An RNA of 177 nucleotides, treated with DMS and 2A3 and read out base by base. 2A3 adducts were read by reverse transcription with SuperScript II with manganese. The data come from the RNA Mapping Database (RMDB), library OK2TRN. The RNA was probed in 150 mM KOAc, 10 mM MgCl2 and 150 mM bicine (pH 8.5) at 24 C. For DMS, 1,443 sequencing reads were counted.
[RMDB]
RNA sequence: GGGAACGACUCGAGUAGAGUCGAAAACGUGGAAGCUAAACGCAGAAACGUGCUGAAGUGCCUGGUCAACUUCACGCACAUGUGCCUGAUGUAUGACAGCAGCUUCCCUAGACUGACCCACGAGGUGCACGGUGGUGCAAUUCGUUGCACCACCGUGAAAAGAAACAACAACAACAAC
Reactivity to DMS in 0.01 (KOAc 150mM, MgCl2 10mM, bicine 150mM(pH8.5), 24C), signal-to-noise 2, nucleotides 027 to 126: c120g020u000g010g020a150a060g000c000u000a060a110a140c140g010c050a030g020a170a110a010c030g000u000g020c020u020g000a070a010g010u020g000c110c140u030g000g000u000c040a100a070c010u000u000c000a010c300g020c010a030c020a040u010g010u000g000c240c020u010g020a030u000g010u000a040u020g020a110c100a100g020c160a050g000c020u000u000c010c000c000u020a080g000a100c060u000g020a090c030c010c030a060c140g000a040g000g020u000g020
Reactivity to 2A3 in 0.01 (KOAc 150mM, MgCl2 10mM, bicine 150mM(pH8.5), 24C), signal-to-noise 2, nucleotides 027 to 126: c050g050u200g010g010a010a000g000c020u090a230a210a020c120g000c010a000g050a020a030a000c050g010u000g040c010u000g020a090a040g020u010g070c020c140u280g000g030u040c040a040a030c000u000u000c010a010c160g150c000a000c030a030u180g050u070g130c030c010u060g070a140u090g110u120a160u130g130a040c060a070g050c010a000g000c060u020u000c000c000c000u050a100g030a120c100u080g110a070c000c010c000a030c100g030a090g080g100u060g070